Background:
An RNA of 177 nucleotides, treated with DMS and 2A3 and read out base by base. The 2A3 profile rests on 1,964 reads. Conditions: 150 mM KOAc, 10 mM MgCl2 and 150 mM bicine (pH 8.5), 24 C.
RNA sequence: GGGAACGACUCGAGUAGAGUCGAAAACCCACCUUUUCCGGCGCCUAGAGUGAACUGGUCUCGGAACUUAACCCUAAGUAUACACUGGUCACAUCCCAAGUCUUGCGCGCUUCGGCAGUCAAAUCUACUUUAGAGAAUGGUUCGCCAUUCUCUAAAGAAAAGAAACAACAACAACAAC
Reactivity to DMS in 0.01 (KOAc 150mM, MgCl2 10mM, bicine 150mM(pH8.5), 24C), signal-to-noise 4, nucleotides 027 to 126: c000c000c000a170c210c060u000u000u000u000c030c020g010g020c250g020c030c030u000a090g010a130g030u000g000a110a070c060u000g010g020u000c090u010c080g000g010a060a040c160u000u000a060a130c120c070c100u000a060a060g020u000a040u020a080c120a050c030u000g020g000u010c050a050c070a130u000c010c020c010a070a130g010u000c030u000u010g010c080g020c060g000c020u000u010c080g030g030c110a070g000u000c060a040a080a080u010c050u000a180
Reactivity to 2A3 in 0.01 (KOAc 150mM, MgCl2 10mM, bicine 150mM(pH8.5), 24C), signal-to-noise 2, nucleotides 027 to 126: c000c000c000a010c010c010u070u100u060u040c040c020g080g000c070g000c030c020u110a090g010a040g170u100g030a190a030c060u040g020g000u000c040u030c090g020g020a020a020c020u120u100a080a060c040c020c010u020a090a000g030u020a060u040a070c050a030c010u020g000g000u020c030a030c010a090u100c010c020c010a020a040g030u050c030u060u070g030c050g020c000g010c070u040u030c030g040g000c020a010g000u070c040a020a000a160u070c040u120a140